[RMDB]
RNA sequence: GGGAACGACUCGAGUAGAGUCGAAAAGAUAUGGACAGUUCGCUAGAGAGUAGAGUCGGAAACGACUCCACUCUCUUGGACCGAGACUGUCCUAAGUCAAAGUCAGGACGGUUCGCCGUCCUGACAAGCUUCUUUAAUUCUUCGGAAUUAAAGAAGCAAAAGAAACAACAACAACAAC
Reactivity to 2A3 in 0.01 (KOAc 150mM, MgCl2 10mM, bicine 150mM(pH8.5), 24C), signal-to-noise 1, nucleotides 027 to 126: g010a010u090a020u140g030g000a010c000a000g010u020u010c010g010c020u000a020g010a000g000a020g010u020a010g000a000g010u010c010g020g010a070a070a040c020g010a000c010u000c010c000a000c000u030c010u000c000u000u010g000g000a020c080c100g040a070g090a070c010u000g000u000c000c000u020a120a010g010u010c040a150a030a000g000u000c000a000g000g000a010c000g020g070u050u140c240g030c130c000g010u000c010c000u010g000a000c010a000a000
Reactivity to DMS in 0.01 (KOAc 150mM, MgCl2 10mM, bicine 150mM(pH8.5), 24C), signal-to-noise 2, nucleotides 027 to 126: g000a030u000a300u010g000g000a020c010a010g000u000u000c010g000c030u000a020g010a020g000a020g020u000a050g010a010g030u000c000g010g000a070a090a180c000g000a010c000u000c010c030a000c010u000c000u000c000u010u000g010g010a080c300c030g000a060g010a010c000u000g000u000c000c000u000a010a080g010u000c030a070a130a190g000u000c010a000g010g000a010c000g000g000u000u010c150g030c000c000g010u000c010c000u000g000a000c000a030a070